[RMDB]
Conditions: 150 mM KOAc, 10 mM MgCl2 and 150 mM bicine (pH 8.5), 24 C. Chemical mapping of a 207-nucleotide RNA with DMS and 2A3. For 2A3, 7,009 sequencing reads were counted. The DMS profile rests on 12,797 reads.
RNA sequence: GGGAACGACUCGAGUAGAGUCGAAAAUGGGAAAGCAUGCGCUUAUGCAUGCGAAAGGAUGGAGCCCAUCCGAAACGUACGGUCCCAUCCGAAACGUACGCUGGAUGGGAAAGCAUGCGGUGAAUGAUGGCAGUGCAUGCGAAAGGAUGGCGGUCCACAUUAGUGUGUCAUUCGUGACACACUAAUGAAAAGAAACAACAACAACAAC
Reactivity to DMS in 0.01 (KOAc 150mM, MgCl2 10mM, bicine 150mM(pH8.5), 24C), signal-to-noise 3, nucleotides 027 to 156: u000g020g020g010a100a100a230g000c000a000u000g000c030g000c300u000u000a080u000g000c000a020u000g000c000g000a040a060a080g020g010a120u000g010g000a150g010c100c010c000a020u000c010c010g020a030a100a040c040g000u000a040c050g000g010u000c000c000c030a050u000c050c020g020a070a080a090c100g010u010a050c110g030c070u000g010g030a040u000g020g010g010a020a020a060g000c010a010u000g000c000g040g010u010g000a100a130u000g010a160u000g020g010c030a090g000u000g010c000a020u000g020c000g000a060a020a090g010g040a060u010g010g000c030g010g000u000c000c010a070
Reactivity to 2A3 in 0.01 (KOAc 150mM, MgCl2 10mM, bicine 150mM(pH8.5), 24C), signal-to-noise 6, nucleotides 027 to 156: u160g040g010g060a100a080a020g010c010a000u010g000c020g000c070u300u140a050u280g000c010a000u000g000c010g010a010a010a020g060g020a030u060g020g010a040g080c020c010c000a000u030c010c000g040a060a090a020c090g050u200a020c080g050g090u040c000c010c000a010u010c000c020g050a080a060a070c070g110u230a040c070g020c110u050g020g000a010u010g000g000g000a020a000a000g000c000a000u000g000c020g100g050u060g040a070a100u120g090a070u080g140g000c040a040g210u010g060c010a010u010g010c020g030a030a010a000g010g000a010u020g000g050c080g000g090u000c000c000a010